Overview: This 207-nucleotide RNA was probed chemically with 2A3. Conditions: 150 mM KOAc, 10 mM MgCl2 and 150 mM bicine (pH 8.5), 24 C. As a SHAPE reagent, 2A3 marks flexible, mostly unpaired nucleotides at the ribose 2'-OH. 2A3 adducts were read by reverse transcription with SuperScript II with manganese. The 2A3 profile rests on 1,256 reads. Values cover nucleotides 27 to 156.
RNA sequence: GGGAACGACUCGAGUAGAGUCGAAAAGGAGCAUCAUGUUCUUGAGCUUCAUCCACAUUGCAGCAUGUAGAAGCACUUCAUUCCUUUACAUGAUGGAAGGAUACUCUGUUGUGUGGCUACAGCACACUUUGUUUAUCCACUCAUUGGUUGAUGGAGAAGGAUGGCAAUCCUUCGGGAUUGCCAUCCUAAAAGAAACAACAACAACAAC
Reactivity to 2A3 in 0.01 (KOAc 150mM, MgCl2 10mM, bicine 150mM(pH8.5), 24C), signal-to-noise 1, nucleotides 027 to 156: g010g000a020g000c020a100u020c000a010u090g070u100u040c060u090u050g030a010g030c000u000u010c000a050u000c030c020a060c000a040u010u280g070c030a000g000c010a050u000g020u030a020g000a130a000g020c030a040c020u040u020c010a080u020u030c010c060u030u000u090a060c030a030u070g040a020u020g030g090a050a070g040g000a010u010a020c040u050c000u050g100u170u000g000u100g020u050g090g090c050u110a080c080a030g000c000a010c000a010c000u000u000u020g050u030u110u090a000u020c000c170a000c030u070c000a030u000u060g010g040u000u070g000a090u040g000g000a020g000a040